Description:
The record gives the reactivity of an RNA of 177 nucleotides to 2A3 and DMS. Reactivities are rounded to 0.1 and cut off at 0 and 3. Source: RMDB library TTRDES, as collected in RNAgym.
RNA sequence: GGGAACGACUCGAGUAGAGUCGAAAAGAUAUGGAAUGUCCCAAGACAUGCCAGACAGUCGGAAACGACUGUAUGGCAACAGCUUGUGGACAUUCCUAAGUCAAAGAAAGGAGUUCGCUCCUUUCAAGCUAUAUACUGCGUUCGCGCAGUAUAUAGCAAAAGAAACAACAACAACAAC
Reactivity to 2A3 in 0.01 (KOAc 150mM, MgCl2 10mM, bicine 150mM(pH8.5), 24C), signal-to-noise 2, nucleotides 027 to 126: g000a030u040a050u130g000g010a000a000u000g000u000c020c000c000a010a000g030a030c050a050u230g000c000c010a000g000a040c000a000g000u010c000g030g040a060a060a070c000g000a000c020u000g000u000a020u010g010g030c000a010a000c000a000g070c010u080u070g100u300g040g020a000c000a000u000u000c000c000u000a010a000g010u020c020a010a050a210g010a000a000a000g020g020a010g020u110u220c300g120c200u020c050c000u000u000u010c000a010a010
Reactivity to DMS in 0.01 (KOAc 150mM, MgCl2 10mM, bicine 150mM(pH8.5), 24C), signal-to-noise 3, nucleotides 027 to 126: g020a060u000a300u000g000g000a030a010u000g000u000c000c000c010a010a020g020a040c080a230u000g020c010c000a020g000a030c010a000g020u010c010g010g010a140a120a200c010g000a010c000u000g010u000a000u000g010g010c000a030a040c280a140g000c010u000u000g000u020g000g010a010c010a010u000u010c000c000u010a020a080g000u000c070a080a110a160g010a000a010a000g010g010a040g020u000u020c250g010c000u000c000c010u000u000u000c010a100a120